[RMDB]
RNA sequence: GGGAACGACUCGAGUAGAGUCGAAAAGUCGAACUCAUCAAUGGAUUUCCUGAGUCAAGCGCAUUGGAAGAAGACGUUGCACAUCAUCGAAGUUUGCUCGCCGGCUUCGACUGCGGCGAUCACCAGCAUGACCGUCCUGAUUCGUCAGGACGGUCAUAAAAGAAACAACAACAACAAC
Reactivity to 2A3 in 0.01 (KOAc 150mM, MgCl2 10mM, bicine 150mM(pH8.5), 24C), signal-to-noise 2, nucleotides 027 to 126: g040u040c010g020a080a090c040u000c000a030u030c000a100a180u160g090g050a120u020u030u050c000c010u040g030a020g080u090c030a040a030g040c030g000c080a080u020u150g060g000a060a090g050a040a060g030a030c000g040u030u000g070c040a030c010a160u150c020a000u040c040g040a040a050g030u060u110u090g060c040u100c120g020c060c000g000g000c000u050u050c000g060a040c020u020g000c000g020g000c000g030a040u010c030a000c090c010a000g130c130
Reactivity to DMS in 0.01 (KOAc 150mM, MgCl2 10mM, bicine 150mM(pH8.5), 24C), signal-to-noise 1, nucleotides 027 to 126: g030u030c010g090a090a100c030u010c060a080u020c060a170a030u000g000g000a010u020u000u000c040c030u030g060a170g010u020c010a080a080g000c040g000c050a110u000u000g000g040a060a100g040a070a090g010a080c020g040u030u000g000c000a010c160a130u000c130a140u040c040g010a060a110g090u000u000u000g000c100u000c200g000c000c010g000g000c030u000u000c050g000a020c070u000g020c060g020g000c010g000a110u000c090a000c080c040a090g000c110